This 177-nucleotide RNA was probed chemically with 2A3 and DMS. The reactions ran in a buffer of 150 mM KOAc, 10 mM MgCl2 and 150 mM bicine (pH 8.5), at 24 C. For DMS the reverse transcriptase was MarathonRT. Reactivities are given for positions 27 through 126. It was measured as part of the RMDB library OK2TST.

RNA sequence: GGGAACGACUCGAGUAGAGUCGAAAAUGCAGGUUGCCGGGUUGCGCGUGAGGUUCUGGCCAAUGGCCCCGGCGACGGCUUCAACCUGACCUAUCGUGCCGAUGUCGAUGGCGCUGGCCUUACCUUACCUGAGGUAGUGAUUCGUCACUACCUCAGGAAAAGAAACAACAACAACAAC
Reactivity to 2A3 in 0.01 (KOAc 150mM, MgCl2 10mM, bicine 150mM(pH8.5), 24C), signal-to-noise 1, nucleotides 027 to 126: u170g000c000a000g080g120u040u020g020c000c000g000g030g060u140u270g050c300g000c070g070u030g110a070g000g020u130u130c080u200g200g050c000c000a020a060u080g070g000c000c000c000c000g000g000c010g000a000c000g000g000c000u090u080c030a060a070c000c030u040g100a120c000c040u090a080u160c050g020u070g000c040c020g090a060u070g050u110c060g030a090u120g060g020c050g000c070u040g010g050c000c000u010u020a060c020c000u040u110a040
Reactivity to DMS in 0.01 (KOAc 150mM, MgCl2 10mM, bicine 150mM(pH8.5), 24C), signal-to-noise 2, nucleotides 027 to 126: u000g020c010a070g000g000u000u000g060c060c020g010g010g010u000u020g010c050g000c080g000u000g000a300g020g010u000u020c230u000g020g040c000c010a080a140u000g000g010c010c000c070c020g010g000c020g010a040c080g010g000c010u010u000c160a040a140c040c010u010g010a100c030c040u000a070u010c070g020u010g010c010c010g000a090u010g030u000c070g000a060u000g010g000c030g000c080u000g010g010c000c010u020u020a070c030c050u000u020a140